[RMDB]
RNA sequence: GGGAACGACUCGAGUAGAGUCGAAAAGUGGUGCGCGGAGAGGGUAACCACCGGCGCGCGUCACUGAUAUAUCCACCUGGGGGUAAGGGGAGAAAAGGAUACAGCGCGACGAAGUUAGCACGCUGCCGAAAUGUACCCACAUUCGUGUGGGUACAAAACGUUUAUGUCAGUUCGCUGACAUAAACGUAAAAGAAACAACAACAACAAC
Reactivity to DMS in 0.01 (KOAc 150mM, MgCl2 10mM, bicine 150mM(pH8.5), 24C), signal-to-noise 1, nucleotides 027 to 156: g030u000g000g000u000g040c040g000c000g020g010a120g000a170g010g000g010u010a130a110c070c070a040c010c000g000g010c000g000c000g040c010g010u000c010a000c000u000g010a100u000a170u000a090u010c010c050a090c010c020u030g080g000g010g020g000u000a080a040g010g000g000g000a140g000a090a090a120a130g010g010a210u010a070c040a040g020c030g020c000g030a070c070g000a160a100g010u000u000a100g000c020a050c010g000c000u000g020c060c030g020a050a100a120u000g040u000a000c000c010c010a020c000a160u000u010c250g000u060g020u000g000g030g080u000a000c000a010a040a110
Reactivity to 2A3 in 0.01 (KOAc 150mM, MgCl2 10mM, bicine 150mM(pH8.5), 24C), signal-to-noise 1, nucleotides 027 to 156: g040u020g010g010u010g000c020g000c010g050g130a120g040a090g150g030g040u110a090a120c060c070a050c010c010g050g060c010g000c020g010c010g000u000c000a000c000u010g000a000u060a000u030a030u090c040c060a060c050c030u040g000g000g000g040g000u010a020a080g090g010g000g000a010g050a050a050a000a050g040g000a010u080a070c020a010g020c020g040c010g080a060c030g040a100a040g090u080u110a020g050c050a010c030g020c050u060g010c010c010g020a080a060a010u090g020u020a010c000c030c000a000c010a010u060u070c250g030u020g000u000g010g000g020u000a000c000a000a000a000
An RNA of 207 nucleotides, treated with DMS and 2A3 and read out base by base.
The RNA was probed in 150 mM KOAc, 10 mM MgCl2 and 150 mM bicine (pH 8.5) at 24 C.
2A3 adducts were read by reverse transcription with SuperScript II with manganese.